[RMDB]
This 177-nucleotide RNA was probed chemically with DMS and 2A3. Source: RMDB library TTRDEL, as collected in RNAgym. 2A3 adducts were read by reverse transcription with SuperScript II with manganese. For DMS the reverse transcriptase was MarathonRT.
RNA sequence: GGGAACGACUCGAGUAGAGUCGAAAAGAUAUGGAUGUAGUAUCCCUGUAGCGUUGAAAUCGGAAACGAUGGAGCUACUGGGAUAUUCUACAUCCUAAGUCAAAAGGAGUCACUUCGGUGACUCCAACACAGCGUAAUCGUUCGCGAUUACGCUGUGAAAAGAAACAACAACAACAAC
Reactivity to DMS in 0.01 (KOAc 150mM, MgCl2 10mM, bicine 150mM(pH8.5), 24C), signal-to-noise 2, nucleotides 027 to 126: g010a020u010a300u000g010g000a010u000g030u000a000g000u010a000u000c000c000c000u000g010u000a000g020c010g010u000u040g000a100a150a040u000c000g000g000a140a080a210c010g000a020u000g000g000a130g000c000u000a000c000u010g000g010g000a000u000a000u010u000c050u000a000c010a000u000c010c000u000a010a090g030u000c040a070a040a160a210g010g000a040g000u000c000a010c010u000u010c160g030g010u000g020a010c010u000c000c000a050a070
Reactivity to 2A3 in 0.01 (KOAc 150mM, MgCl2 10mM, bicine 150mM(pH8.5), 24C), signal-to-noise 1, nucleotides 027 to 126: g010a020u100a050u080g000g000a000u000g000u010a010g010u020a030u020c000c000c020u040g000u000a000g000c020g190u300u080g040a010a010a010u010c030g030g000a040a020a070c020g000a000u030g000g000a030g000c020u000a000c000u010g000g010g000a010u010a010u020u040c000u000a000c010a000u000c000c000u000a050a020g040u020c010a010a000a110a210g010g000a000g000u000c000a000c040u060u150c300g030g000u000g000a010c000u010c000c000a000a000
For DMS, 1,516 sequencing reads were counted.